RNA sequence: GGGAACGACUCGAGUAGAGUCGAAAAACCGGAACUCGCGUCCUUCGCUAUCCAGAGUGCAGCAACUUACGUGAGAAACCGGGUUGAUGAACACCGAAGGAAACUUACGGUCAAACUGGCAUUCGAUAUCGAAGAAGAGGUAUGUGUAACGUACCUCCAGGAUCUAGACGUUCGCGUCUAGAUCCUGAAAAGAAACAACAACAACAAC
Reactivity to 2A3 in 0.01 (KOAc 150mM, MgCl2 10mM, bicine 150mM(pH8.5), 24C), signal-to-noise 2, nucleotides 027 to 156: a000c020c010g020g060a070a040c050u060c120g070c020g050u030c020c010u050u010c030g000c020u030a040u050c020c070a200g010a010g110u030g040c000a030g010c000a010a090c060u080u110a040c060g020u030g020a010g000a180a090a030c020c010g000g020g030u040u100g090a190u140g040a090a040c060a030c030c040g090a130a110g020g000a120a150a060c010u010u010a060c030g050g000u100c080a040a040a110c060u020g130g000c010a050u030u020c010g050a000u010a040u100c020g030a030a020g010a060a010g000a000g030g000u010a010u000g110u000g100u110a070a010c030g000u000a000c000c010u000c010
Conditions: 150 mM KOAc, 10 mM MgCl2 and 150 mM bicine (pH 8.5), 24 C. An RNA of 207 nucleotides, treated with 2A3 and read out base by base. Values cover nucleotides 27 to 156. Source: RMDB library OK3TST, as collected in RNAgym. 2A3 adducts were read by reverse transcription with SuperScript II with manganese.